[RMDB]
RNA sequence: GGGAACGACUCGAGUAGAGUCGAAAAUGGACACCCGCAGUACGUCGCAGCUUCGAUCCCGUAUCGGGUGCCUCUCAAGCCUGCCGCGCCUGGAUUACUGCGGUUCAGUUCUUGUCCGCCGGGCAAGUGCUGCGAGUUAAUUCGUUAACUCGCAGCAAAAAGAAACAACAACAACAAC
Reactivity to 2A3 in 0.01 (KOAc 150mM, MgCl2 10mM, bicine 150mM(pH8.5), 24C), signal-to-noise 3, nucleotides 027 to 126: u190g020g010a030c020a020c010c000c000g010c030a020g020u030a020c030g000u020c030g030c080a020g020c010u060u090c040g050a060u060c030c010c010g030u090a100u180c060g000g000g010u040g030c010c000u080c000u020c010a020a030g030c000c030u030g000c050c030g020c000g020c020c010u070g010g020a040u050u030a050c010u040g000c000g010g000u020u010c010a000g020u000u020c000u040u030g030u000c040c050g020c090c070g070g020g020c000a020a030g030
Reactivity to DMS in 0.01 (KOAc 150mM, MgCl2 10mM, bicine 150mM(pH8.5), 24C), signal-to-noise 3, nucleotides 027 to 126: u030g030g000a030c080a080c140c010c010g010c130a020g000u000a020c120g010u000c190g010c020a060g010c050u010u020c070g010a080u010c010c010c010g060u030a070u010c080g000g000g000u010g000c030c050u000c060u000c060a070a070g020c060c010u000g010c030c060g020c050g020c090c030u020g000g000a120u010u010a020c020u000g000c010g000g000u000u000c120a040g000u010u010c010u000u030g020u020c000c030g010c080c060g000g000g010c050a050a030g010
Chemical mapping of a 177-nucleotide RNA with 2A3 and DMS.